RNA sequence: GGGAACGACUCGAGUAGAGUCGAAAACUAUUAAUAUUGCUAAAGCUAAAAAAGGUGAAAAAUCAUGGAAUGUAACUGUUUAUCCUACAGUAAAAUUAGGUGCCUUACCUCAAGGUUGGGAACAGCAGUUAUCGGAUUUAGAUAAGUUAGCUACACCGAACUAUGCUCUAUUCGUAGAGCAUAGUUCAAAAGAAACAACAACAACAAC
Reactivity to 2A3 in 0.01 (KOAc 150mM, MgCl2 10mM, bicine 150mM(pH8.5), 24C), signal-to-noise 3, nucleotides 027 to 156: c020u020a050u250u140a190a140u100a090u160u160g010c020u070a100a060a070g020c030u080a060a010a030a050a050a050g060g000u060g040a120a060a000a050a030u090c060a050u110g070g080a110a070u150g030u020a010a030c010u000g040u030u010u060a060u040c000c000u020a030c050a130g080u130a030a080a040a120u110u060a000g020g000u020g030c000c010u020u070a030c000c020u120c150a070a080g050g000u000u020g010g010g010a050a000c010a040g000c010a000g020u010u000a020u060c030g010g030a030u030u060u100a050g010a040u100a090a080g050u030u060a000g000c020u050a040c020a020c040c050
Reactivity to DMS in 0.01 (KOAc 150mM, MgCl2 10mM, bicine 150mM(pH8.5), 24C), signal-to-noise 2, nucleotides 027 to 156: c050u010a190u010u020a090a170u020a050u010u000g000c010u000a110a090a130g000c000u010a000a090a110a060a060a070g010g010u050g000a050a060a140a110a070u000c020a110u000g020g020a080a070u000g020u000a010a020c020u050g050u000u000u010a130u010c050c050u000a060c040a090g010u000a080a040a040a110u000u000a060g020g010u000g030c030c030u000u000a050c020c010u020c150a060a100g030g020u000u000g050g000g000a020a110c080a070g030c030a040g010u000u000a000u010c150g020g000a140u010u000u000a060g020a090u000a030a100g000u000u000a020g030c020u000a090c040a040c120c050